[RMDB]
RNA sequence: GGGAACGACUCGAGUAGAGUCGAAAAAAAAAGAUAUGGACCCUCCAAGCGACGAUCGUACUGGUUUACGUAUUCGGAAACGAAUACGCAAUCAGUACGGGAGCUUGUGAGGGUCCUAAGUCAAAAAUCACAUGAAUAUGUUCGCAUAUUCAUGUGAAAAAGAAACAACAACAACAAC
Reactivity to 2A3 in 0.01 (KOAc 150mM, MgCl2 10mM, bicine 150mM(pH8.5), 24C), signal-to-noise 1, nucleotides 027 to 126: a050a000a030a020a020g010a000u040a040u090g000g010a000c000c000c010u000c000c010a020a000g000c010g300a300c040g020a090u010c000g000u000a010c010u020g110g030u210u000u030a010c000g000u020a000u000u010c010g000g000a010a000a020c000g010a000a000u010a000c000g000c010a010a020u000c010a010g010u000a000c000g010g000g000a000g000c010u030u010g000u110g010a000g000g000g000u000c000c000u000a000a000g010u010c000a040a000a000a030a010
Reactivity to DMS in 0.01 (KOAc 150mM, MgCl2 10mM, bicine 150mM(pH8.5), 24C), signal-to-noise 3, nucleotides 027 to 126: a050a030a060a090a090g000a010u000a080u010g000g000a020c000c000c000u000c000c010a140a010g010c000g020a060c300g000a040u000c000g000u000a000c010u000g010g000u010u000u010a100c010g010u010a000u000u000c000g030g010a010a010a020c000g010a020a000u000a000c000g000c050a010a000u000c000a000g010u000a010c000g000g000g000a000g030c010u000u000g020u020g010a010g000g010g020u000c010c000u000a000a050g000u020c010a030a070a090a100a130
Background
This 177-nucleotide RNA was probed chemically with 2A3 and DMS. The RNA was probed in 150 mM KOAc, 10 mM MgCl2 and 150 mM bicine (pH 8.5) at 24 C. For 2A3 the reverse transcriptase was SuperScript II with manganese. 2A3 is a SHAPE reagent: it acylates the 2'-hydroxyl of flexible nucleotides of all four kinds.